[RMDB]
RNA sequence: GGGAACGACUCGAGUAGAGUCGAAAAGAUAUGGAAGACCAGGUGACAUGCCUUGUCUUUCGGAAACGAAAGCAAGGCAACAGCACCGGUCUUCCUAAGUCAAAAGGAAUCGGUUCGCCGAUUCCAAGUAUAAUAGCUGGUUCGCCAGCUAUUAUACAAAAGAAACAACAACAACAAC
Reactivity to 2A3 in 0.01 (KOAc 150mM, MgCl2 10mM, bicine 150mM(pH8.5), 24C), signal-to-noise 3, nucleotides 027 to 126: g000a000u040a000u080g010g020a000a010g010a010c060c180a230g000g020u020g030a080c100a290u300g000c000c000u060u030g100u300c010u010u000u000c010g000g000a020a020a000c000g000a010a000a000g010c000a000a010g010g030c010a010a010c020a010g010c000a000c000c000g000g000u000c000u000u000c000c000u000a000a000g000u010c010a010a010a050a180g000g000a010a010u000c010g010g090u100u130c300g060c110c000g010a000u010u000c000c000a000a000
Reactivity to DMS in 0.01 (KOAc 150mM, MgCl2 10mM, bicine 150mM(pH8.5), 24C), signal-to-noise 6, nucleotides 027 to 126: g010a020u000a200u010g000g010a010a010g000a010c000c010a110g090g010u000g000a050c140a220u010g010c010c010u000u000g000u010c010u000u000u000c000g010g000a040a030a060c010g010a010a020a000g000c010a020a000g010g010c000a030a010c190a120g000c010a010c000c000g000g010u000c000u000u000c000c000u000a000a060g010u000c020a090a090a110a140g010g000a010a000u000c000g000g010u000u010c300g030c000c000g000a020u000u000c000c000a010a060
Source information:
The record gives the reactivity of an RNA of 177 nucleotides to 2A3 and DMS. The data come from the RNA Mapping Database (RMDB), library TTRDES. DMS adducts were read by reverse transcription with MarathonRT. The 2A3 profile rests on 19,632 reads. The DMS profile rests on 12,364 reads.